[RMDB]
RNA sequence: GGGAACGACUCGAGUAGAGUCGAAAAGGAACAUCCUUCGGGAUGUUCCAUAGGCGGCGCCUCUCGCUAAGCGGCGCCCAGAGGCGCGCAGCGCAGCUUGAAAGUAAGCCUAGUUCGCUAGGCUUAAGCCCAUAAAAGAUUUCGAUCUUUUAUGGGCAAAAGAAACAACAACAACAAC
Reactivity to DMS in 0.01 (KOAc 150mM, MgCl2 10mM, bicine 150mM(pH8.5), 24C), signal-to-noise 5, nucleotides 027 to 126: g010g000a020a010c010a010u000c000c010u000u010c200g020g010g010a010u000g000u000u000c000c000a030u010a030g010g020c070g000g010c010g010c000c020u000c020u000c100g000c070u010a070a120g020c230g020g020c040g020c300c070c110a020g000a030g010g020c020g010c000g010c040a040g010c020g000c050a050g000c070u000u010g000a060a060a070g010u000a010a000g000c000c000u000a010g000u000u010c210g020c010u000a000g000g000c010u000u000a000a060
Reactivity to 2A3 in 0.01 (KOAc 150mM, MgCl2 10mM, bicine 150mM(pH8.5), 24C), signal-to-noise 2, nucleotides 027 to 126: g000g000a000a000c020a000u020c010c020u050u080c150g050g020g020a000u000g000u000u020c000c010a000u000a000g040g010c040g020g000c000g010c020c000u010c000u040c030g040c030u020a120a080g060c090g080g000c010g020c000c000c000a010g010a020g030g000c030g000c030g060c030a060g020c070g000c000a010g040c010u040u110g060a060a060a030g060u110a000a010g000c000c010u030a010g020u040u040c120g040c080u000a000g030g000c010u000u000a010a000

An RNA of 177 nucleotides, treated with DMS and 2A3 and read out base by base. For 2A3, 2,923 sequencing reads were counted. Values cover nucleotides 27 to 126.